[RMDB]
RNA sequence: GGGAACGACUCGAGUAGAGUCGAAAACCGUGUCCUUCACGGGGCUCUGGUCCACGCGCUCCAGCGCCGCCACGCACGCCACCAGCACGUCCUCGCUCGGGCAGGGCAGGGUGACCCCUGCCCGGACGCCCUGGAUAGAUUUCGAUCUAUCCAGGGCAAAAGAAACAACAACAACAAC
Reactivity to DMS in 0.01 (KOAc 150mM, MgCl2 10mM, bicine 150mM(pH8.5), 24C), signal-to-noise 2, nucleotides 027 to 126: c000c020g020u020g010u020c030c050u030u000c130a060c190g010g010g010g020c020u010c020u040g030g000u000c010c010a090c120g030c080g020c040u030c050c020a080g000c110g040c040c010g000c020c040a050c060g000c040a040c060g010c050c000a080c030c020a070g010c080a070c070g000u000c050c000u000c050g040c050u010c040g020g000g000c040a060g000g000g030c120a100g000g000g000u010g000a110c190c040c000c000u030g000c010c000c000g000g000a090c060
Reactivity to 2A3 in 0.01 (KOAc 150mM, MgCl2 10mM, bicine 150mM(pH8.5), 24C), signal-to-noise 4, nucleotides 027 to 126: c000c010g000u010g030u020c070c070u120u150c050a030c060g010g000g010g000c000u010c030u110g050g010u030c020c010a050c060g050c000g010c010u030c010c020a040g020c000g020c030c010g020c020c010a040c030g030c010a040c040g040c010c020a040c000c010a010g030c030a010c030g060u050c000c010u030c030g020c020u040c010g010g000g000c000a030g030g000g000c040a040g110g090g070u170g110a140c000c000c000c010u000g000c000c000c000g000g000a010c040
The record gives the reactivity of an RNA of 177 nucleotides to DMS and 2A3. The reactions ran in a buffer of 150 mM KOAc, 10 mM MgCl2 and 150 mM bicine (pH 8.5), at 24 C. The DMS profile rests on 3,412 reads.